[RMDB]
RNA sequence: GGGAACGACUCGAGUAGAGUCGAAAACGAGCGAAUACUCGGCCAGCGCUUCCAUCGCCGCAUACCAAUGCUGUUGCAGCGCACCGAUAUCGCCGGUGCGACGCGAGAUCGCGGUUUGCAGUGCCGCCGGCUCAUCAUAUUUCGAUAUGAUGAGCCGAAAAGAAACAACAACAACAAC
Reactivity to 2A3 in 0.01 (KOAc 150mM, MgCl2 10mM, bicine 150mM(pH8.5), 24C), signal-to-noise 8, nucleotides 027 to 126: c020g010a030g060c030g080a090a040u100a170c030u010c010g010g000c020c030a040g020c020g000c020u070u000c040c020a050u060c020g040c050c010g020c010a020u070a160c020c030a120a090u100g020c020u030g030u120u130g000c060a030g010c000g000c000a000c020c000g030a030u070a060u170c110g040c080c000g000g000u020g000c000g020a050c010g020c020g010a050g020a080u110c060g010c010g010g010u060u050u120g040c030a020g010u010g050c000c010g010c000
Reactivity to DMS in 0.01 (KOAc 150mM, MgCl2 10mM, bicine 150mM(pH8.5), 24C), signal-to-noise 3, nucleotides 027 to 126: c100g020a060g010c070g000a090a050u030a080c090u010c010g000g010c020c100a110g000c050g010c050u030u030c040c050a090u010c060g000c040c070g020c060a050u000a120c090c130a070a110u040g000c010u000g000u000u030g000c080a110g000c020g000c020a020c010c000g000a100u010a060u020c080g000c130c020g000g020u000g000c000g000a030c050g040c030g020a070g010a070u010c070g000c040g000g000u010u000u020g040c070a110g010u010g000c040c030g020c080